[RMDB]
RNA sequence: GGGAACGACUCGAGUAGAGUCGAAAAGAUAUGGAUACGAAGAGCGAUAAGCUCGUAUCGGAAACGAUACCGAGCUUUUGACGCUCUAGUAUCCUAAGUCAAAUCACUAAAGUUCGCUUUAGUGAAACGUAGCGAUUAGGUUCGCCUAAUCGCUACGAAAAGAAACAACAACAACAAC
Reactivity to DMS in 0.01 (KOAc 150mM, MgCl2 10mM, bicine 150mM(pH8.5), 24C), signal-to-noise 2, nucleotides 027 to 126: g010a030u000a070u010g000g010a010u000a000c000g000a200a130g000a000g000c000g010a110u010a010a020g000c000u000c000g000u000a000u000c000g010g010a030a020a050c000g010a000u000a000c170c130g020a000g000c000u000u010u000u000g000a260c130g000c030u000c000u000a220g000u000a000u000c000c000u000a010a060g000u000c010a140a220a190u010c000a020c020u000a000a010a000g000u010u030c300g000c000u000u000u000a010g020u000g010a020a080a120
Reactivity to 2A3 in 0.01 (KOAc 150mM, MgCl2 10mM, bicine 150mM(pH8.5), 24C), signal-to-noise 2, nucleotides 027 to 126: g010a000u050a030u030g020g010a000u000a020c040g140a150a080g010a020g000c020g100a190u080a300a000g000c000u000c000g000u000a000u000c000g000g000a010a000a000c010g000a000u010a010c130c100g020a000g010c000u070u070u110u220g300a130c050g000c000u000c000u000a000g000u000a000u020c000c000u010a010a010g000u000c030a020a000a230u050c000a000c000u010a010a020a030g030u060u140c300g080c110u030u020u020a000g000u000g010a080a040a020
Notes: The record gives the reactivity of an RNA of 177 nucleotides to DMS and 2A3. The data come from the RNA Mapping Database (RMDB), library TTRDES. The 2A3 profile rests on 3,740 reads. The RNA was probed in 150 mM KOAc, 10 mM MgCl2 and 150 mM bicine (pH 8.5) at 24 C.